RNA sequence: GGGAACGACUCGAGUAGAGUCGAAAAACCCACUGCUCGAGGAUCUCCUCUCUGUCUCCGCGGUUUUUCUUCUUCUCGGAACGGCUCAUCUCGACAAGAGGCGGCGGUCCUCAGUACUCUUACUCUUUUCUGUAAAGAGGAGACUGCUGGACUCGCCCCCAUGUAAACAGUUCGCUGUUUACAUGGGAAAAGAAACAACAACAACAAC
Reactivity to 2A3 in 0.01 (KOAc 150mM, MgCl2 10mM, bicine 150mM(pH8.5), 24C), signal-to-noise 1, nucleotides 027 to 156: a000c000c000c000a000c000u010g020c000u000c000g020a010g040g040a180u020c240u030c010c020u060c030u000c020u050g070u030c040u050c090c040g030c100g100g000u010u030u090u070u040c020u080u080c010u160u000c070u090c040g030g040a060a040c050g000g000c020u010c010a090u020c040u010c000g050a000c040a140a070g020a070g190g050c060g060g000c040g040g000u000c000c000u040c000a010g000u120a270c000u000c020u110u140a210c010u050c000u030u130u110u010c090u270g230u300a050a000a010g000a000g000g000a000g000a000c010u010g120c120u010g000g000a000c040u040c180g030c000c000